[RMDB]
RNA sequence: GGGAACGACUCGAGUAGAGUCGAAAAGAUUUGGCCUGCGGUCUGUGGUUUGCUCUGGUUUAGUGGAAAAACAAAGGGUUUGGAGUCACUAGACCUGGGUUUGAAUCCCAGCUCUACUGCUAGCUGCGCCUACUGAAUUUUUCGAAAUUCAGUAGGCAAAAGAAACAACAACAACAAC
Reactivity to 2A3 in 0.01 (KOAc 150mM, MgCl2 10mM, bicine 150mM(pH8.5), 24C), signal-to-noise 3, nucleotides 027 to 126: g030a040u120u110u150g030g010c020c000u020g030c050g010g040u000c010u020g020u020g010g010u030u060u060g010c010u010c010u040g010g060u040u000u030a030g020u090g030g070a060a110a050a060a020c090a050a300a150g240g030g000u040u050u100g080g020a070g060u080c000a000c020u040a000g000a010c010c000u000g000g010g020u040u130u180g000a010a010u000c020c000c000a010g000c020u050c030u100a040c030u040g030c010u040a040g030c010u050g080c060
Reactivity to DMS in 0.01 (KOAc 150mM, MgCl2 10mM, bicine 150mM(pH8.5), 24C), signal-to-noise 4, nucleotides 027 to 126: g010a140u000u000u010g000g010c000c030u010g020c110g030g010u000c020u010g020u000g010g010u000u000u000g010c020u010c010u000g010g020u000u000u000a040g020u000g000g000a080a130a040a060a050c040a100a110a140g000g010g000u000u010u000g010g020a180g010u000c020a020c020u010a020g010a010c030c010u000g010g000g010u000u000u010g000a060a060u000c000c030c010a080g000c300u010c070u000a030c060u000g010c040u000a100g010c050u000g010c300
Chemical mapping of a 177-nucleotide RNA with 2A3 and DMS. Source: RMDB library OK2TST, as collected in RNAgym. DMS adducts were read by reverse transcription with MarathonRT. Values cover nucleotides 27 to 126.